[RMDB]
RNA sequence: GGGAACGACUCGAGUAGAGUCGAAAAAGGGGAUAUAUGGCAGCAGCUUGCCACUUCAUAGCAAUCUAACUAACCCUUCAAAGUUCUGAGCAGGGAAGAGUUCACUCUGGGAUUCCUCCACAUGGUAACAAAAAAACCAAGGAGAUACAAGGAGAAAACUAUAGUGAUUAUUCGUAAUCACUAUAGUAAAAGAAACAACAACAACAAC
Reactivity to 2A3 in 0.01 (KOAc 150mM, MgCl2 10mM, bicine 150mM(pH8.5), 24C), signal-to-noise 4, nucleotides 027 to 156: a000g040g010g000g030a030u050a010u030a030u190g040g010c010a030g000c020a020g010c070u070u050g000c000c020a050c030u160u140c060a090u100a050g030c040a050a120u080c060u110a010a080c020u020a010a030c010c010c000u030u030c050a100a100a010g020u080u050c030u110g010a010g030c030a030g030g010g030a070a020g020a030g050u050u080c040a020c040u030c030u020g000g000g070a080u090u060c020c000u010c030c010a060c010a060u070g000g000u050a080a050c150a070a150a090a020a010a000a000c030c010a030a040g030g000a010g010a000u090a030c030a020a040g020g010a030g080a040a120a010
Reactivity to DMS in 0.01 (KOAc 150mM, MgCl2 10mM, bicine 150mM(pH8.5), 24C), signal-to-noise 2, nucleotides 027 to 156: a040g000g010g030g010a160u000a080u000a070u000g020g010c030a020g010c030a150g010c090u000u000g030c010c010a040c080u010u000c070a100u000a070g000c090a090a070u000c030u000a070a130c090u010a070a110c000c000c010u010u000c040a090a100a120g010u010u010c050u000g000a090g000c040a040g000g020g010a040a050g000a060g000u000u000c050a170c030u000c020u000g000g020g010a130u000u000c090c010u000c020c000a100c080a090u000g000g030u000a030a150c060a000a010a100a080a140a030a070c010c020a040a090g010g000a050g010a150u000a050c040a040a080g000g000a100g000a110a040a080

Source information:
An RNA of 207 nucleotides, treated with 2A3 and DMS and read out base by base. For 2A3, 2,784 sequencing reads were counted. For DMS, 3,374 sequencing reads were counted. DMS (dimethyl sulfate) methylates the pairing face of unpaired adenines and cytosines. Conditions: 150 mM KOAc, 10 mM MgCl2 and 150 mM bicine (pH 8.5), 24 C. For 2A3 the reverse transcriptase was SuperScript II with manganese. The data come from the RNA Mapping Database (RMDB), library OK3TST. For DMS the reverse transcriptase was MarathonRT.